[RMDB]
RNA sequence: GGGAACGACUCGAGUAGAGUCGAAAAUCAGCGUUGCGAGGGUUUCGUCGUCCCAGGACCACACGAACUCAAGCGGCGCGGUGUGCUUCGCCAGAGUCAGCUUGCCGCCGCGCAGGCGGAAAGCGCUAGUAUAGAACUUGUUCGCAAGUUCUAUACUAAAAGAAACAACAACAACAAC
Reactivity to 2A3 in 0.01 (KOAc 150mM, MgCl2 10mM, bicine 150mM(pH8.5), 24C), signal-to-noise 9, nucleotides 027 to 126: u070c020a020g010c000g010u010u020g010c010g010a050g020g030g000u040u150u170c020g010u010c010g010u000c020c020c030a120g100g040a030c030c020a040c010a000c080g010a020a010c010u010c020a020a010g000c000g010g000c000g000c010g000g000u020g010u020g010c040u050u070c040g050c050c020a040g010a030g130u130c070a020g010c010u010u040g030c000c000g000c000c000g040c060g030c070a020g010g000c000g000g000a020a010a000g010c010g000c010u010
Reactivity to DMS in 0.01 (KOAc 150mM, MgCl2 10mM, bicine 150mM(pH8.5), 24C), signal-to-noise 9, nucleotides 027 to 126: u010c030a150g020c020g020u000u010g000c000g000a300g010g000g000u000u020u000c020g010u010c190g000u010c010c030c180a190g000g010a040c020c080a090c280a200c020g000a030a020c010u000c010a040a300g010c010g010g000c020g010c010g000g010u000g010u010g010c120u000u000c030g010c010c020a140g000a080g000u010c110a140g010c000u000u000g000c010c000g010c000c010g010c300g000c190a120g000g020c000g000g000a030a010a010g010c010g000c080u000

The record gives the reactivity of an RNA of 177 nucleotides to 2A3 and DMS. Conditions: 150 mM KOAc, 10 mM MgCl2 and 150 mM bicine (pH 8.5), 24 C. DMS adducts were read by reverse transcription with MarathonRT. Reactivities are given for positions 27 through 126.